RNA sequence: GGGAACGACUCGAGUAGAGUCGAAAAGCUCUGCAAGGGCACCAAGAGCGAAGACAUGUGUGCAGGAGCACCAACACUUGUCGAUUAGCAGCUUGACGUGCGGAAGCACCAACGUCUUGCUGCGAAAGGGAUGCUUGUCGUUCGCGACGAGCAUCCCAAAAGAAACAACAACAACAAC
Reactivity to DMS in 0.01 (KOAc 150mM, MgCl2 10mM, bicine 150mM(pH8.5), 24C), signal-to-noise 2, nucleotides 027 to 126: g000c020u000c000u000g000c020a050a070g030g000g000c020a160c140c060a060a100g010a110g040c030g000a090a120g000a000c030a100u000g020u010g010u000g020c100a120g030g000a230g000c120a060c060c020a110a080c000a030c050u000u000g000u000c000g000a180u000u010a090g010c000a000g000c030u000u000g000a010c010g020u010g000c070g030g000a110a150g000c080a190c050c090a210a040c000g000u020c010u010u010g000c010u000g000c000g000a010a000a060
Reactivity to 2A3 in 0.01 (KOAc 150mM, MgCl2 10mM, bicine 150mM(pH8.5), 24C), signal-to-noise 4, nucleotides 027 to 126: g000c000u000c010u050g110c080a090a140g000g040g000c020a010c010c020a070a030g050a010g110c050g050a060a010g030a020c020a040u050g030u020g000u020g030c060a080g080g040a090g070c070a060c060c010a040a040c040a000c020u040u070g010u060c010g040a050u020u090a010g000c010a010g000c000u010u000g000a000c000g020u050g010c110g040g030a070a030g060c080a120c120c000a010a020c000g000u010c000u010u000g000c000u010g000c000g020a050a020a000